[RMDB]
RNA sequence: GGGAACGACUCGAGUAGAGUCGAAAAGGCUGUUCUCCAACCAGUGCUAGAACUGUACAGGCCACCAGGAGGCAGGAGGUGGGCCCUCAGAGCUUGGCUGGAGAAAGUUCGGGGCCUACAAAGGCGGCCUUGUAUAUUCUUUCGAGAAUAUACAAGGAAAAGAAACAACAACAACAAC
Reactivity to 2A3 in 0.01 (KOAc 150mM, MgCl2 10mM, bicine 150mM(pH8.5), 24C), signal-to-noise 5, nucleotides 027 to 126: g040g000c030u050g160u160u050c010u010c000c000a020a040c010c000a040g030u030g120c040u120a080g050a300a100c030u030g020u080a040c030a080g010g030c010c000a020c010c020a050g070g050a030g110g050c080a040g040g080a050g040g050u050g040g050g070c010c000c010u010c040a070g000a000g010c010u020u030g040g000c010u030g040g010a040g030a020a000a000g010u040u040c010g020g000g100g010c000c000u030a040c080a020a080a000g050g030c050g030g010
Reactivity to DMS in 0.01 (KOAc 150mM, MgCl2 10mM, bicine 150mM(pH8.5), 24C), signal-to-noise 7, nucleotides 027 to 126: g000g020c020u000g010u000u010c010u010c010c020a050a080c050c010a030g010u010g010c050u000a110g010a110a250c040u000g000u010a080c190a130g000g010c010c010a070c040c030a120g010g010a100g010g000c060a040g000g000a100g010g010u000g010g020g010c010c010c040u000c050a080g010a030g010c010u000u000g010g010c030u000g000g010a040g010a040a030a020g010u000u000c030g010g000g000g010c010c010u000a040c150a050a080a110g010g000c050g010g000